[RMDB]
RNA sequence: GGGAACGACUCGAGUAGAGUCGAAAAAGAUAUGGAAUGAUGAACUACUUCGAAAGUACAGCUUGGAUUUACAGCUCGGAAACGAGCUGUUGUCAGCUGUAUGAGUAGAAGCAUCAUUCCUAAGUCAUCUUAGUAAAUGGUUCGCCAUUUACUAAGAAAAAGAAACAACAACAACAAC
Reactivity to 2A3 in 0.01 (KOAc 150mM, MgCl2 10mM, bicine 150mM(pH8.5), 24C), signal-to-noise 7, nucleotides 027 to 126: a000g040a030u070a030u130g000g000a010a000u010g030a000u020g010a100a130c100u230a070c000u300u010c010g020a050a010a000g010u010a010c000a010g000c020u190u300g180g000a060u300u190u200a010c000a000g010c010u010c000g020g050a060a090a070c010g010a000g000c010u010g000u000u000g010u000c000a000g000c000u010g000u000a000u010g000a000g000u000a000g000a000a000g000c000a000u000c000a000u000u000c000c000u000a040a000g010u000c010a040
Reactivity to DMS in 0.01 (KOAc 150mM, MgCl2 10mM, bicine 150mM(pH8.5), 24C), signal-to-noise 8, nucleotides 027 to 126: a070g000a050u010a300u010g000g000a010a000u000g000a010u000g010a100a060c100u020a300c010u000u000c000g000a180a160a300g000u000a000c000a000g010c010u000u020g020g000a020u000u010u000a010c000a000g000c000u000c000g010g000a080a080a180c010g010a010g000c000u000g000u000u000g010u000c010a030g010c000u000g010u000a000u000g000a050g010u000a060g000a010a010g000c000a000u000c000a010u000u000c000c000u000a020a070g000u000c040a180
Structure probing data (2A3 and DMS) for a 177-nucleotide construct. 2A3 adducts were read by reverse transcription with SuperScript II with manganese. For DMS the reverse transcriptase was MarathonRT. The RNA was probed in 150 mM KOAc, 10 mM MgCl2 and 150 mM bicine (pH 8.5) at 24 C.